Conditions: 150 mM KOAc, 10 mM MgCl2 and 150 mM bicine (pH 8.5), 24 C. An RNA of 207 nucleotides, treated with 2A3 and DMS and read out base by base. For DMS, 3,832 sequencing reads were counted. DMS adducts were read by reverse transcription with MarathonRT.
RNA sequence: GGGAACGACUCGAGUAGAGUCGAAAAUAACGAUUCGUCGUUAGCAUUACCGUAGGUCCUGAACUACGAGAUAAGGUGCGUUGAAACUAGUUCGAAAGAGCUAGUGGAGCACCGAAACUCGCAGGACCUAAACGGGGGGAGGCUCCUUCGGGAGCAACAGGGUAACGUAAUUCGUUACGUUACCCUGAAAAGAAACAACAACAACAAC
Reactivity to 2A3 in 0.01 (KOAc 150mM, MgCl2 10mM, bicine 150mM(pH8.5), 24C), signal-to-noise 4, nucleotides 027 to 156: u040a000a000c010g010a030u060u070c200g080u010c000g020u110u010a050g060c120a160u130u230a090c010c020g010u010a000g000g020u020c010c000u030g030a160a110c080u150a070c300g000a010g000a020u070a060a010g000g020u010g000c010g140u230u050g010a000a000a010c000u000a000g010u000u000c020g060a130a080a060g000a020g000c000u000a000g000u010g000g000a010g000c010a010c020c000g000a000a000a000c000u000c000g030c000a000g000g020a000c000c000u000a000a020a000c000g010g000g000g000g010g010a050g160g000c000u000c010c000u060u060c230g060g010g010a000g000c000a000a000
Reactivity to DMS in 0.01 (KOAc 150mM, MgCl2 10mM, bicine 150mM(pH8.5), 24C), signal-to-noise 2, nucleotides 027 to 156: u000a030a010c010g000a100u000u000c300g020u020c000g010u000u000a120g030c190a200u010u000a070c000c050g030u010a030g000g000u000c010c000u050g020a110a300c040u020a100c000g000a030g030a060u000a200a300g000g000u000g000c000g000u000u000g010a260a240a040c020u000a000g070u000u000c000g010a260a180a250g000a020g040c020u000a020g030u010g000g000a240g000c020a000c000c000g000a050a120a120c020u000c020g020c010a050g010g040a020c000c000u000a000a040a050c050g000g020g000g040g010g010a180g020g020c020u000c000c000u000u000c250g060g000g000a010g000c000a010a040